[RMDB]
RNA sequence: GGGAACGACUCGAGUAGAGUCGAAAAGCAUGUAAAAGUCACUAUGGAGUUUGAGAUUCUUUCUCACCCUGGUUGAAAUUCCAUUGGUCAACAAGGCAUAGAAGGAGAGAUACCGACACCUGAUCCGCAUCAUCCUCAGUUUCGACUGAGGAUGAUGAAAAGAAACAACAACAACAAC
Reactivity to DMS in 0.01 (KOAc 150mM, MgCl2 10mM, bicine 150mM(pH8.5), 24C), signal-to-noise 4, nucleotides 027 to 126: g010c080a050u010g010u010a050a060a140a080g010u000c050a080c040u000a060u010g010g010a080g000u000u000u000g020a060g010a070u000u000c150u000u000u000c010u000c040a090c080c010c020u010g020g010u000u020g010a030a060a080u000u000c060c050a080u000u010g010g010u000c020a030a040c070a050a040g020g010c070a080u000a040g010a060a090g000g000a040g000a090g000a070u010a040c050c020g020a090c090a050c040c030u000g000a080u010c050c070g000
Reactivity to 2A3 in 0.01 (KOAc 150mM, MgCl2 10mM, bicine 150mM(pH8.5), 24C), signal-to-noise 3, nucleotides 027 to 126: g000c020a030u070g000u200a020a000a020a110g060u050c030a000c040u050a090u140g020g010a090g080u070u100u090g110a030g000a050u150u040c010u070u160u000c010u010c010a030c030c000c000u020g040g020u040u080g050a030a040a040u140u030c040c000a050u030u150g030g000u040c000a010a020c000a070a050g050g010c030a030u050a070g080a080a010g030g010a040g000a010g000a010u070a070c000c000g010a010c000a020c010c000u060g030a080u030c020c040g040